[RMDB]
RNA sequence: GGGAACGACUCGAGUAGAGUCGAAAACAAAAACAAAGUUCUCCACAUAUGCUCAUUGGUGGAUUAAACAGGCAGUUCGAAAGUCGCUUUCUGACCAGUCAAGGACCAUUCGCCUAAACAAACAAAACGCUCAUCAACUGUUCGCAGUUGAUGAGCGAAAAGAAACAACAACAACAAC
Reactivity to 2A3 in 0.01 (KOAc 150mM, MgCl2 10mM, bicine 150mM(pH8.5), 24C), signal-to-noise 2, nucleotides 027 to 126: c000a020a090a000a060a000c170a020a110a050g000u080u000c040u050c060c010a060c010a080u300a040u280g080c030u040c210a170u000u100g100g000u000g040g000a010u080u130a080a110a080c080a010g000g080c050a000g040u040u070c000g040a050a020a050g060u170c060g030c090u000u080u000c070u070g060a100c010c030a050g060u090c020a040a040g030g000a010c000c000a140u020u010c040g190c000c000u000a000a190a000c040a070a090a000c070a060a010a020a020